[RMDB]
RNA sequence: GGGAACGACUCGAGUAGAGUCGAAAACCGUUAGUAAAGGCGAUCGAAAGCGGUAGAGGGCAAACCGAAUCUUUUCUGUAAAGAAAUAGAUAUGUGGAGUACGGAUCUUUCUCAAUGCCUACUUUAGUUUAACUGGGUAAUUCGUUACCCAGUUAAAAAAAGAAACAACAACAACAAC
Reactivity to DMS in 0.01 (KOAc 150mM, MgCl2 10mM, bicine 150mM(pH8.5), 24C), signal-to-noise 9, nucleotides 027 to 126: c000c010g010u030u020a080g020u010a060a100a060g010g010c060g010a080u010c090g010a070a140a150g010c070g010g010u010a060g010a110g000g000g010c050a050a080a110c040c020g000a100a040u000c000u000u000u000u010c000u000g000u040a080a090a010g000a000a010a030u030a010g000a030u010a060u020g010u020g010g000a080g010u010a070c090g010g000a070u010c020u000u000u000c010u000c060a090a070u020g010c020c020u000a090c050u000u010u010a070g010
Reactivity to 2A3 in 0.01 (KOAc 150mM, MgCl2 10mM, bicine 150mM(pH8.5), 24C), signal-to-noise 5, nucleotides 027 to 126: c000c010g050u050u100a040g020u040a070a060a070g070g050c120g030a030u060c040g030a120a030a000g040c040g030g020u050a030g040a060g080g040g010c030a080a030a060c020c010g030a030a030u000c010u030u010u010u010c020u030g170u190a100a160a000g020a020a020a010u290a040g020a000u050a040u120g090u160g020g050a060g050u070a050c060g020g060a020u020c000u030u080u010c030u000c040a060a040u070g020c020c000u020a050c010u110u070u070a070g050